[RMDB]
RNA sequence: GGGAACGACUCGAGUAGAGUCGAAAAAGAGUUGCGGUGCCUGGGGUCGGGAGCCGCCAGCCUCACUGCCGAUGGCCUGAGCCUGGAGUGCGCCAUGGCCAUCUCGCCGUGCAUGACGGCCGUGGCCCACCUCUGCGGGAUUCGUCCCGCAGAGGUGAAAAGAAACAACAACAACAAC
Reactivity to DMS in 0.01 (KOAc 150mM, MgCl2 10mM, bicine 150mM(pH8.5), 24C), signal-to-noise 2, nucleotides 027 to 126: a080g020a110g010u010u000g040c030g030g020u000g000c100c040u000g040g000g020g010u010c040g020g000g030a130g020c020c020g020c040c040a050g000c120c020u000c040a040c070u010g020c000c130g000a080u020g010g010c010c040u000g000a160g000c060c040u010g000g000a160g000u010g010c140g020c050c010a040u000g020g010c010c000a020u000c000u000c160g010c020c080g000u000g020c200a090u010g000a020c040g010g000c000c060g030u000g010g000c020c010
Reactivity to 2A3 in 0.01 (KOAc 150mM, MgCl2 10mM, bicine 150mM(pH8.5), 24C), signal-to-noise 1, nucleotides 027 to 126: a000g090a010g030u080u150g070c030g000g070u060g070c050c040u080g000g030g090g010u090c070g030g050g000a030g010c000c000g000c000c000a010g050c000c000u070c040a070c010u050g110c030c050g150a140u070g000g000c000c020u030g050a030g020c010c010u080g160g110a100g060u110g050c130g000c000c010a080u060g000g010c000c000a000u040c040u040c030g000c020c020g110u070g090c060a110u160g040a050c010g000g030c000c010g050u000g000g000c040c010